[RMDB]
RNA sequence: GGGAACGACUCGAGUAGAGUCGAAAACACUGGGGUAAUCGUCAGAGCAUAGGCCAUGCGAGGUUCUGAUACCAAAUCUGAGGCACUGGCCAAAAGGUCCCGAAGGAGAUCACCAUCUGCAUAUUCAGACACUGACGAUGUUCGCAUCGUCAGUGUCAAAAGAAACAACAACAACAAC
Reactivity to 2A3 in 0.01 (KOAc 150mM, MgCl2 10mM, bicine 150mM(pH8.5), 24C), signal-to-noise 1, nucleotides 027 to 126: c070a030c070u030g010g000g000g110u110a140a020u060c110g120u050c060a000g010a040g010c020a080u070a080g080g000c000c040a030u020g010c050g160a130g090g000u060u000c010u050g020a080u060a080c040c000a000a040a110u120c000u090g100a200g070g000c040a020c200u070g000g010c000c060a010a020a000a010g080g000u060c050c000c000g000a050a020g000g010a050g000a030u070c000a010c000c000a030u020c040u080g030c020a070u030a150u130u300c070a010